[RMDB]
RNA sequence: GGGAACGACUCGAGUAGAGUCGAAAAUGGGUAUCAUACCAAUCAUGUCUUUUAUCGUGGUAACCAUCUAAUAUUUCAGGAGCGAAUGCGAUAACUGCAGCCGUUUUAAAACGGCUGGAUGGAUUAAGCCUACUCACAAAUUCGUUUGUGAGUAGGCAAAAGAAACAACAACAACAAC
Reactivity to DMS in 0.01 (KOAc 150mM, MgCl2 10mM, bicine 150mM(pH8.5), 24C), signal-to-noise 2, nucleotides 027 to 126: u000g000g020g010u000a080u010c090a070u020a170c050c000a090a100u010c030a100u010g000u040c000u000u000u000u000a050u020c070g020u010g060g000u000a060a100c050c010a030u020c030u000a050a120u000a140u010u010u000c080a080g000g000a100g060c030g010a090a080u000g010c000g010a020u020a040a130c100u000g040c020a000g010c000c000g000u000u010u000u020a130a050a050a070c000g000g010c000u000g010g010a030u000g010g000a090u000u010a060a160
Reactivity to 2A3 in 0.01 (KOAc 150mM, MgCl2 10mM, bicine 150mM(pH8.5), 24C), signal-to-noise 2, nucleotides 027 to 126: u060g010g040g080u130a080u190c050a070u140a200c030c050a020a100u140c060a040u170g150u190c020u040u100u020u050a120u100c050g030u030g000g020u040a070a060c030c010a000u020c010u050a140a100u030a180u150u120u160c100a080g030g030a080g030c020g090a130a030u100g020c050g000a040u020a160a000c030u020g020c000a040g010c000c000g000u000u020u030u100a180a300a000a000c010g000g050c020u000g010g000a010u020g030g000a000u000u110a090a000
Source information:
Source: RMDB library OK2TST, as collected in RNAgym. This 177-nucleotide RNA was probed chemically with DMS and 2A3. The DMS profile rests on 1,288 reads. Values cover nucleotides 27 to 126. For 2A3 the reverse transcriptase was SuperScript II with manganese.